[RMDB]
RNA sequence: GGGAACGACUCGAGUAGAGUCGAAAAUGAUAGGCUUUCGAGCCUAUCAACUGCGUAGCUGCGUUAAAAUUUUAGCUACGCUUAAUAAUAAUUUUUAACGCAAAUAUAAGGUCUUCGGACCUUAUAAGAUGUACCCUUUUUUCGAAAAGGGUACAUCAAAAGAAACAACAACAACAAC
Reactivity to 2A3 in 0.01 (KOAc 150mM, MgCl2 10mM, bicine 150mM(pH8.5), 24C), signal-to-noise 2, nucleotides 027 to 126: u070g000a010u000a000g000g000c000u040u110u160c250g040a020g000c000c010u000a000u000c000a000a010c020u000g030c000g000u000a010g000c040u050g000c010g040u000u000a030a120a090a150u160u260u140u210a020g010c010u010a000c010g000c010u030u020a000a010u090a010a020u050a060a080u040u060u040u060u070a010a050c010g000c000a000a140a000u060a010u000a020a010g000g000u000c000u010u070c230g120g000a010c000c020u000u010a000u000a000a010
Reactivity to DMS in 0.01 (KOAc 150mM, MgCl2 10mM, bicine 150mM(pH8.5), 24C), signal-to-noise 1, nucleotides 027 to 126: u020g000a000u010a000g000g000c000u000u010u020c170g000a020g010c000c000u000a000u000c000a040a110c090u000g000c000g000u000a010g000c030u000g000c000g000u010u010a010a020a080a130u010u000u010u000a070g010c010u000a000c010g000c000u000u010a030a020u000a110a080u030a020a050u000u000u000u000u000a000a030c000g030c000a150a080a200u000a030u000a000a000g000g010u000c000u000u010c190g010g000a000c000c000u000u000a000u000a000a060